[RMDB]
RNA sequence: GGGAACGACUCGAGUAGAGUCGAAAAUCACCGGGCUCGAACUCCUCCUGGCGGAACCGGUCGGCCAGCGCGGUGAGCGCGUCCUCGUCGUCGAAUCCGCGCAGCAGCGGCAGCUCGCACAGCUCGUAACUAUUCAAAACUUCGGUUUUGAAUAGUUAAAAGAAACAACAACAACAAC
Reactivity to DMS in 0.01 (KOAc 150mM, MgCl2 10mM, bicine 150mM(pH8.5), 24C), signal-to-noise 5, nucleotides 027 to 126: u020c050a080c090c010g010g000g000c030u000c050g000a080a100c040u000c040c010u000c070c020u000g020g010c040g010g000a070a090c160c020g000g000u020c030g020g000c020c070a100g000c030g000c020g000g030u020g010a210g020c020g000c030g000u020c080c100u010c120g010u010c020g020u010c010g000a130a150u000c020c010g010c020g010c030a120g010c090a060g000c070g000g000c080a070g000c030u010c030g010c210a060c100a060g010c010u000c050g010u000
Reactivity to 2A3 in 0.01 (KOAc 150mM, MgCl2 10mM, bicine 150mM(pH8.5), 24C), signal-to-noise 9, nucleotides 027 to 126: u090c030a020c070c000g000g020g000c020u030c050g040a070a040c020u010c020c000u020c000c010u020g030g000c020g010g020a040a060c030c010g050g050u060c020g030g000c000c010a050g000c010g000c000g000g060u130g120a140g090c030g000c000g030u090c010c050u090c020g090u030c000g020u010c010g020a060a060u020c000c000g000c010g000c010a020g000c000a000g010c010g040g010c020a020g010c010u030c020g020c010a090c020a040g020c010u010c020g020u010
Source information: An RNA of 177 nucleotides, treated with DMS and 2A3 and read out base by base. Reactivities are rounded to 0.1 and cut off at 0 and 3. The RNA was probed in 150 mM KOAc, 10 mM MgCl2 and 150 mM bicine (pH 8.5) at 24 C. DMS adducts were read by reverse transcription with MarathonRT.